[RMDB]
RNA sequence: GGGAACGACUCGAGUAGAGUCGAAAACAACAAUGGACUGGGCAACUUGAUUUAACAGUGUUUUUCGAUGGCAAUCGAUCAGUAUCAAGAGAUAUUUUCUUUGAAAAAGCACUUAAAGUGAUACGUCUCAUCCCUACGUGUUCGCACGUAGGGAUGAAAAAGAAACAACAACAACAAC
Reactivity to 2A3 in 0.01 (KOAc 150mM, MgCl2 10mM, bicine 150mM(pH8.5), 24C), signal-to-noise 2, nucleotides 027 to 126: c010a020a010c010a030a040u120g070g010a010c060u120g010g070g000c000a080a040c020u020u060g030a080u250u090u110a070a000c050a050g000u000g000u060u060u010u010u030c010g010a010u030g090g000c040a040a040u020c040g050a020u020c020a050g080u030a060u140c040a140a060g050a010g000a090u040a140u100u100u020u030c020u000u020u010g030a060a020a000a000a040g010c040a020c030u040u110a110a000a020g050u050g050a030u030a060c060g040u060c010
Reactivity to DMS in 0.01 (KOAc 150mM, MgCl2 10mM, bicine 150mM(pH8.5), 24C), signal-to-noise 2, nucleotides 027 to 126: c070a100a080c150a050a040u000g010g030a030c040u000g030g000g020c100a080a050c060u000u000g010a120u000u010u010a090a120c250a050g020u000g040u000u000u000u000u000c030g010a010u020g020g030c240a060a060u000c100g020a100u000c130a080g010u000a050u000c080a060a100g010a050g000a080u000a020u000u000u010u000c000u000u000u000g000a050a050a030a050a030g000c040a030c040u000u000a020a070a050g000u000g000a060u000a020c100g020u010c020
Structure probing data (2A3 and DMS) for a 177-nucleotide construct. Conditions: 150 mM KOAc, 10 mM MgCl2 and 150 mM bicine (pH 8.5), 24 C.